[RMDB]
RNA sequence: GGGAACGACUCGAGUAGAGUCGAAAAGACGCCUUUAGAAGAAGAGGCUACGGGGUAUUCCGGUGUGGGAUACUUAGUAAUAUGCAACGCUAAUUGCAUAAGAUUGUAGGACGGAAUUUACAGUCUUUAGAGAUAAGCACGUUCGCGUGCUUAUCAAGUAUGUAAAUACCUUCGGGUAUUUACAUACAAAAGAAACAACAACAACAAC
Reactivity to DMS in 0.01 (KOAc 150mM, MgCl2 10mM, bicine 150mM(pH8.5), 24C), signal-to-noise 2, nucleotides 027 to 156: g020a100c060g020c000c020u000u000u010a050g030a100a220g030a140a130g000a080g030g010c000u000a040c000g010g020g020g020u000a000u000u000c020c000g030g050u010g020u010g000g030g020a070u000a030c010u000u010a040g040u000a070a170u000a050u000g000c010a030a080c080g000c120u000a060a140u000u010g010c010a070u000a050a050g000a060u000u000g020u000a070g000g010a220c040g000g010a090a270u000u000u000a040c020a070g010u000c010u000u000u000a100g010a170g000a010u000a010a010g010c000a020c000g030u000u010c300g040c020g040u000g000c000u000u000a000u000c000a040a090
Reactivity to 2A3 in 0.01 (KOAc 150mM, MgCl2 10mM, bicine 150mM(pH8.5), 24C), signal-to-noise 7, nucleotides 027 to 156: g080a020c070g010c010c000u050u050u100a200g040a250a030g030a070a020g000a050g030g000c020u020a020c040g090g010g000g000u020a030u020u020c030c020g090g080u230g050u210g050g000g000a010u010a040c000u030u030a020g020u030a020a140u020a020u110g000c000a000a030c060g030c180u150a100a080u080u020g000c000a010u010a080a020g030a030u030u060g030u040a010g010g080a040c090g030g070a050a050u100u110u050a060c010a010g000u000c000u020u070u100a130g020a000g000a060u000a000a000g000c000a000c000g000u040u050c150g010c000g070u000g000c000u000u000a000u000c000a000a000